[RMDB]
RNA sequence: GGGAACGACUCGAGUAGAGUCGAAAACAUUACGAAUUCAGUCGCAAAUUGUAGAAUUAGCUACUCUACGAUUUAGUGAGCGUUAGUAACGUUGUAAUUUAAUAUAGUCUUUGGAAGGAUUAUAUUGGAGCCGCGGACAAGUUCGCUUGUCCGCGAACGAUCUAACCAUCUUCGGAUGGUUAGAUCGAAAAGAAACAACAACAACAAC
Reactivity to 2A3 in 0.01 (KOAc 150mM, MgCl2 10mM, bicine 150mM(pH8.5), 24C), signal-to-noise 2, nucleotides 027 to 156: c040a030u120u210a010c020g080a050a130u130u160c060a070g080u030c010g000c040a010a010a010u000u000g000u010a000g000a000a020u060u030a040g040c010u070a030c020u000c000u000a000c000g010a010u000u020u080a060g010u000g040a060g080c000g010u040u060a020g020u060a120a030c060g000u000u030g010u050a070a160u030u040u050a000a010u010a010u010a010g020u000c050u070u160u190g210g060a110a090g020g000a020u020u000a000u000a000u020u010g000g040a060g080c060c020g000c020g000g000a000c000a000a000g010u050u110c130g040c140u000u010g000u000c040c000g010c000g000a000a000